This 177-nucleotide RNA was probed chemically with DMS and 2A3.
Conditions: 150 mM KOAc, 10 mM MgCl2 and 150 mM bicine (pH 8.5), 24 C.
2A3 adducts were read by reverse transcription with SuperScript II with manganese.
RNA sequence: GGGAACGACUCGAGUAGAGUCGAAAAGAUAUGGAUCAGAAGGGAGCCUGGUUUCGGAAACGAAACAACAGGCGAAGAACUUCUGAGUCCUAAGUCAAACCUAUGUACGCUUCGGCGUACAUAGGAAGAUAUCUGUAGGCUUCGGCCUACAGAUAUCAAAAGAAACAACAACAACAAC
Reactivity to DMS in 0.01 (KOAc 150mM, MgCl2 10mM, bicine 150mM(pH8.5), 24C), signal-to-noise 2, nucleotides 027 to 126: g000a020u000a000u000g000g000a070u010c000a000g010a030a010g030g000g020a010g030c020c000u000g010g000u000u000u000c010g000g000a000a020a010c010g010a010a010a010c010a070a230c070a010g010g010c000g020a040a090g000a190a250c020u000u000c000u000g000a040g020u020c000c000u010a000a160g000u010c000a110a110a190c000c020u000a000u000g010u000a010c000g010c000u000u010c210g040g000c000g020u000a000c010a000u000a010g000g000a010a000
Reactivity to 2A3 in 0.01 (KOAc 150mM, MgCl2 10mM, bicine 150mM(pH8.5), 24C), signal-to-noise 1, nucleotides 027 to 126: g000a000u010a000u030g010g010a000u000c000a020g000a000a010g010g030g030a010g000c000c000u010g030g020u010u000u000c000g000g020a000a000a000c000g010a010a010a010c030a030a260c020a040g040g010c010g010a010a010g000a000a000c000u000u000c000u000g020a020g050u100c000c000u000a000a000g010u020c000a030a000a100c000c000u000a000u000g000u010a000c000g040c000u070u090c300g170g000c010g000u000a000c000a010u010a000g000g000a000a030